[RMDB]
RNA sequence: GGGAACGACUCGAGUAGAGUCGAAAAAGCAAGGAAACGAGCUGACCAAACAGCUGGUGGUGCCGAACUGAAAGGAGUGUAUGAUUCUAUGUACAAUGCGACAUGGGGUUAUGUGGAGUCGGGUCACUAUCUGGGCCACAUUCGUGUGGCCCAGAUAAAAAGAAACAACAACAACAAC
Reactivity to 2A3 in 0.01 (KOAc 150mM, MgCl2 10mM, bicine 150mM(pH8.5), 24C), signal-to-noise 2, nucleotides 027 to 126: a000g110c110a140a000g040g080a070a040a000c060g000a020g000c000u020g000a160c200c000a020a020a020c040a000g000c000u050g020g020u010g040g000u070g260c000c000g010a030a050c000u070g040a110a090a040g140g050a040g050u110g000u080a070u040g000a010u010u000c040u000a000u000g010u050a110c080a290a300u300g170c300g050a000c010a040u060g000g000g000g000u020u030a000u040g060u000g000g000a000g000u030c060g000g020g080u040c000a000c050
Reactivity to DMS in 0.01 (KOAc 150mM, MgCl2 10mM, bicine 150mM(pH8.5), 24C), signal-to-noise 1, nucleotides 027 to 126: a020g010c000a060a200g000g000a080a090a090c050g000a300g000c020u010g010a160c000c110a040a040a070c170a070g020c110u020g000g000u050g000g000u000g000c040c020g000a090a080c130u040g000a080a150a080g050g000a050g000u100g020u020a030u040g000a040u040u000c040u020a010u000g000u020a020c060a080a120u010g000c240g000a030c070a010u020g000g010g000g000u000u000a060u010g010u000g000g000a070g030u000c030g000g000g000u000c050a000c140

Overview
This 177-nucleotide RNA was probed chemically with 2A3 and DMS. The reactions ran in a buffer of 150 mM KOAc, 10 mM MgCl2 and 150 mM bicine (pH 8.5), at 24 C.